[RMDB]
Notes:
Source: RMDB library OK2TRN, as collected in RNAgym. Chemical mapping of a 177-nucleotide RNA with DMS.

RNA sequence: GGGAACGACUCGAGUAGAGUCGAAAACUCCAAGCUGACGAACCCCCCGUUCAGCCCGACCGCUGCGCCUUAUCCGGUAACUAUCGUCUUGAGUCCAACACGACUUAACGGGUUGGCAUGGAUUGUACAACAUAACCGGGUUCGCCCGGUUAUGUUGAAAAGAAACAACAACAACAAC
Reactivity to DMS in 0.01 (KOAc 150mM, MgCl2 10mM, bicine 150mM(pH8.5), 24C), signal-to-noise 2, nucleotides 027 to 126: c060u000c020c050a100a160g010c030u010g000a050c060g010a090a300c020c000c000c010c030c000g000u000u000c070a050g010c030c060c020g010a070c060c040g020c060u010g020c080g000c030c010u000u010a020u000c020c000g040g020u010a030a070c090u000a090u020c030g000u000c030u010u030g010a160g020u010c040c050a030a070c130a060c050g010a150c200u000u000a040a080c010g000g020g010u000u000g000g000c010a070u000g010g000a090u010u020g020u000a120
Record summary: For DMS, 1,696 sequencing reads were counted. High DMS reactivity at an A or C suggests that its Watson-Crick edge is free.